[RMDB]
RNA sequence: GGGAACGACUCGAGUAGAGUCGAAAAAAGGUGCCAUCAUAUCGGUUAAGAACUCUUAACUCUGAUGGCUUUCGAGUUAUGUGGUGCAUUGUAGCUCUCCCUUCAAAUGGUCGUACAGUUCCGUGAAAGUGGAACUUCCAUUCGUGGAAGUUCCACUAAAAGAAACAACAACAACAAC
Reactivity to DMS in 0.01 (KOAc 150mM, MgCl2 10mM, bicine 150mM(pH8.5), 24C), signal-to-noise 1, nucleotides 027 to 126: a040a100g010g010u000g000c010c000a000u010c000a020u010a110u010c220g000g010u000u000a000a010g010a230a090c300u000c020u020u000a000a000c000u010c120u010g020a020u000g000g020c000u010u010u000c000g010a080g020u000u000a090u010g010u010g000g000u000g010c030a060u010u000g010u020a040g010c020u020c030u000c040c020c020u000u000c140a030a060a080u010g000g010u000c040g000u010a000c100a130g010u020u010c020c010g050u000g010a020a080